Source: RMDB library M2RFOK, as collected in RNAgym. This 207-nucleotide RNA was probed chemically with 2A3. For 2A3, 595 sequencing reads were counted. The RNA was probed in 150 mM KOAc, 10 mM MgCl2 and 150 mM bicine (pH 8.5) at 24 C.
RNA sequence: GGGAACGACUCGAGUAGAGUCGAAAAAUCAGAGGGCGCUAUCAUGCAACCUAGGAUUGUCUGCUCAUGCACAGAACCAACUACCGAUAACUAACAGUGCAUGAAGGUUAGUUAUUCCAUAUUAAUUAAAACUCGUAAUUCUUCGGAAUUACGAGAAGGGUUUAUCUACGUUCGCGUAGAUAAACCCAAAAGAAACAACAACAACAAC
Reactivity to 2A3 in 0.01 (KOAc 150mM, MgCl2 10mM, bicine 150mM(pH8.5), 24C), signal-to-noise 2, nucleotides 027 to 156: a000u040c070a040g020a030g070g010g000c020g000c000u110a220u300c120a090u230g000c010a010a000c000c000u000a010g000g110a020u030u070g010u080c060u050g070c000u000c000a000u010g000c000a000c000a040g070a190a080c070c020a100a100c070u140a160c170c020g060a020u010a050a000c020u020a000a000c020a050g040u020g090c010a000u000g030a020a030g080g000u000u020a000g000u000u000a010u100u060c040c030a100u160a080u130u190a110a110u100u140a080a110a100a080c000u000c000g000u000a000a000u000u000c000u020u040c060g100g000a000a000u000u000a000c000g000a000g000a020a000